[RMDB]
RNA sequence: GGGAACGACUCGAGUAGAGUCGAAAAGAUAUGGAUGUUCAUAGUGAGAGCUAUAAUCUCGGAAACGAGGUAGCUCCCUAUGAGACAUCCUAAGUCAAAGAUCCGUUCCGUUCGCGGAACGGAUCAACCACAUCAAAAGGUUCGCCUUUUGAUGUGGAAAAGAAACAACAACAACAAC
Reactivity to 2A3 in 0.01 (KOAc 150mM, MgCl2 10mM, bicine 150mM(pH8.5), 24C), signal-to-noise 3, nucleotides 027 to 126: g030a000u070a050u180g000g000a010u000g000u040u010c000a000u000a020g130u140g170a300g020a010g150c000u000a050u060a300a300u140c010u000c020g030g020a070a080a030c010g000a010g000g020u010a000g000c000u010c000c010c000u010a000u000g020a020g030a010c000a000u000c000c000u000a070a020g040u000c050a120a040a120g010a010u000c010c000g000u000u000c010c000g020u040u060c300g000c000g150g000a000a000c000g000g000a000u000c000a000a010
Reactivity to DMS in 0.01 (KOAc 150mM, MgCl2 10mM, bicine 150mM(pH8.5), 24C), signal-to-noise 2, nucleotides 027 to 126: g020a040u010a300u000g000g000a000u000g000u010u000c000a010u000a000g000u010g020a150g010a010g000c000u000a030u000a240a140u010c000u010c000g010g000a060a110a160c010g000a010g020g010u000a020g000c000u000c010c000c000u010a000u010g000a100g010a010c000a000u000c000c000u020a010a110g000u020c020a100a120a100g000a000u000c000c000g000u000u000c010c000g020u000u000c210g030c030g010g010a000a000c000g000g000a000u000c020a040a110